[RMDB]
RNA sequence: GGGAACGACUCGAGUAGAGUCGAAAAGCCAUGAGUCGCAACGCAAAGCCGCGGCAAGUGGAGUUAGCGAGAAGAGACUAGGCUUUGGUUUCUUCAAGUGAAGCGGUCACCAAUCAGGUGUGGUGGUAGGAGCCUGCAUGGUUCGCCAUGCAGGCAACCAAACUAGGAGUUUCGACUCCUAGUUUGGAAAAGAAACAACAACAACAAC
Reactivity to DMS in 0.01 (KOAc 150mM, MgCl2 10mM, bicine 150mM(pH8.5), 24C), signal-to-noise 2, nucleotides 027 to 156: g000c000c030a070u000g010a300g030u000c000g000c040a060a070c020g030c040a170a190a300g020c000c050g030c020g000g060c010a080a260g010u000g000g020a120g030u000u000a100g000c040g000a300g000a060a030g030a080g010a030c000u000a070g040g000c080u000u000u000g000g020u010u010u010c000u000u000c010a050a300g030u010g000a080a120g000c050g010g010u000c020a060c030c020a070a130u000c080a090g020g030u020g030u000g000g050u000g010g020u000a160g020g000a170g000c000c000u000g000c000a060u000g000g010u020u010c300g000c030c010a040u000g030c000a010g000g020c030a000a030
Reactivity to 2A3 in 0.01 (KOAc 150mM, MgCl2 10mM, bicine 150mM(pH8.5), 24C), signal-to-noise 4, nucleotides 027 to 156: g040c010c020a020u050g030a000g030u010c000g010c040a050a080c050g070c130a160a220a040g040c080c070g000c040g000g020c050a030a040g010u000g020g050a090g040u060u090a030g020c030g010a040g010a070a000g010a010g000a010c010u020a040g130g090c070u150u120u110g020g000u020u020u010c000u020u020c030a060a030g020u020g060a080a030g030c030g020g030u060c010a010c050c010a020a110u140c060a070g030g020u070g020u050g060g030u020g020g040u040a090g050g110a040g000c000c000u010g000c000a010u010g000g010u040u050c130g010c060c000a000u000g000c000a010g000g000c000a000a000

Record summary: Structure probing data (DMS and 2A3) for a 207-nucleotide construct. Conditions: 150 mM KOAc, 10 mM MgCl2 and 150 mM bicine (pH 8.5), 24 C. The DMS profile rests on 3,434 reads. The data come from the RNA Mapping Database (RMDB), library M2RFPK. 2A3 adducts were read by reverse transcription with SuperScript II with manganese. The 2A3 profile rests on 3,360 reads.